[RMDB]
RNA sequence: GGGAACGACUCGAGUAGAGUCGAAAAGAUAUGGAAGGUGGUUAGCUGGAGCCUAACGAAGUCCUAUAUCGGAAACGAUAUAGGCCGAGUUAGGCGUUGAAAGCUAACGUAACAUCCUUCCUAAGUCCAUAAAAGGACCGUUCGCGGUCCUUUUAUGAAAAGAAACAACAACAACAAC
Reactivity to DMS in 0.01 (KOAc 150mM, MgCl2 10mM, bicine 150mM(pH8.5), 24C), signal-to-noise 3, nucleotides 027 to 126: g000a090u000a300u000g000g000a020a000g010g030u000g020g000u000u000a000g010c000u000g000g000a100g020c000c000u000a000a000c000g000a170a170g000u000c010c000u000a000u000a000u000c000g020g000a180a090a220c000g000a010u000a000u000a010g010g010c010c020g000a290g000u000u000a010g010g010c000g010u000u010g000a060a120a030g000c000u000a000a010c000g010u010a000a030c220a020u020c000c000u000u000c000c000u000a030a110g020u000c030

Overview
The record gives the reactivity of an RNA of 177 nucleotides to DMS. For DMS, 4,536 sequencing reads were counted. Values cover nucleotides 27 to 126. The RNA was probed in 150 mM KOAc, 10 mM MgCl2 and 150 mM bicine (pH 8.5) at 24 C. For DMS the reverse transcriptase was MarathonRT.